[RMDB]
Source: RMDB library TTRINS, as collected in RNAgym. An RNA of 177 nucleotides, treated with DMS and read out base by base. The reactions ran in a buffer of 150 mM KOAc, 10 mM MgCl2 and 150 mM bicine (pH 8.5), at 24 C. For DMS the reverse transcriptase was MarathonRT.
RNA sequence: GGGAACGACUCGAGUAGAGUCGAAAAGAUAUGGAAGGAAUGCGGGAGCAUGUAGGGAGAUUGGUUCCUCGGAAACGAGGAGAGAGAUCAUCGAUCUACAUGCUCCCGCCGCUUCCUUCCUAAGUCACGUAUUAUUCUCGUUCGCGAGAAUAAUACGAAAAGAAACAACAACAACAAC
Reactivity to DMS in 0.01 (KOAc 150mM, MgCl2 10mM, bicine 150mM(pH8.5), 24C), signal-to-noise 3, nucleotides 027 to 126: g010a030u000a300u000g020g000a020a020g020g000a160a020u030g000c000g000g000g000a000g020c000a000u000g020u000a020g000g000g010a300g020a000u030u000g060g040u000u000c000c000u000c010g000g000a160a120a280c020g010a060g010g000a180g010a110g010a190g030a050u000c030a070u010c040g010a300u020c010u010a020c010a010u000g020c000u010c000c000c000g000c000c000g000c000u010u010c000c000u000u010c020c000u020a030a150g000u000c050a300